This 177-nucleotide RNA was probed chemically with 2A3 and DMS.

[RMDB]
RNA sequence: GGGAACGACUCGAGUAGAGUCGAAAAUGGUGUUAAGUGGAAUAAGUGGAAAAAUAUACAUAUAUGUACAGGGGGCUACAUAUAUGUAUAUGCCCCCUAGCCUCAGUAUAAGUAGGUAUAAGGUGGACAUUACGUCAUCCUUCGGGAUGACGUAAUGAAAAGAAACAACAACAACAAC
Reactivity to 2A3 in 0.01 (KOAc 150mM, MgCl2 10mM, bicine 150mM(pH8.5), 24C), signal-to-noise 3, nucleotides 027 to 126: u090g030g010u060g020u100u110a140a070g030u090g060g050a100a130u100a150a070g060u120g030g080a070a080a000a010a040u020a000u000a010c000a000u010a000u000a000u010g000u010a020c110a110g000g000g000g110g000c020u010a000c000a000u040a000u020a000u010g000u000a000u000a000u000g000c000c000c000c010c000u000a000g020c000c000u010c040a010g070u110a070u010a300a030g120u180a000g000g040u080a180u020a120a020g050g000u020g020g020a010
Reactivity to DMS in 0.01 (KOAc 150mM, MgCl2 10mM, bicine 150mM(pH8.5), 24C), signal-to-noise 4, nucleotides 027 to 126: u020g000g010u000g000u000u010a050a150g010u020g000g000a080a060u010a060a090g010u020g000g000a010a080a050a110a030u000a010u000a000c000a010u000a010u000a010u000g000u010a010c080a140g000g020g010g030g030c150u000a000c010a010u000a010u010a000u000g000u000a010u000a010u000g000c040c000c000c010c020u000a020g010c020c020u000c050a130g010u020a120u020a050a110g010u040a030g000g020u000a040u010a050a040g020g000u020g000g000a300
Description
It was measured as part of the RMDB library OK1LIB. For DMS the reverse transcriptase was MarathonRT. The DMS profile rests on 8,842 reads. The 2A3 profile rests on 1,813 reads.